Chemical mapping of a 177-nucleotide RNA with DMS. It was measured as part of the RMDB library OK2TRN.
RNA sequence: GGGAACGACUCGAGUAGAGUCGAAAACAAAGGGGGCGGAACCUGCAGGAGCCGAUGGUGGGCAUUGACAUAAAGGAUCCAAUCAGUUUCACCAACUGGGUUUAUCGCAUCGGACUGAGGGACAUCCCUCUGGGCACAUAUUCGUAUGUGCCCAGAGAAAAGAAACAACAACAACAAC
Reactivity to DMS in 0.01 (KOAc 150mM, MgCl2 10mM, bicine 150mM(pH8.5), 24C), signal-to-noise 2, nucleotides 027 to 126: c040a090a110a120g000g000g000g000g050c110g000g000a040a140c010c050u000g020c080a110g010g010a150g000c020c040g030a070u000g010g040u010g000g010g010c050a080u000u000g000a110c180a090u000a030a040a130g000g000a070u000c020c050a050a100u000c070a030g000u010u000u010c130a130c200c140a070a080c080u000g000g000g000u030u020u000a090u010c100g030c010a020u000c030g000g000a100c040u020g000a080g050g020g010a160c120a040u010c030c030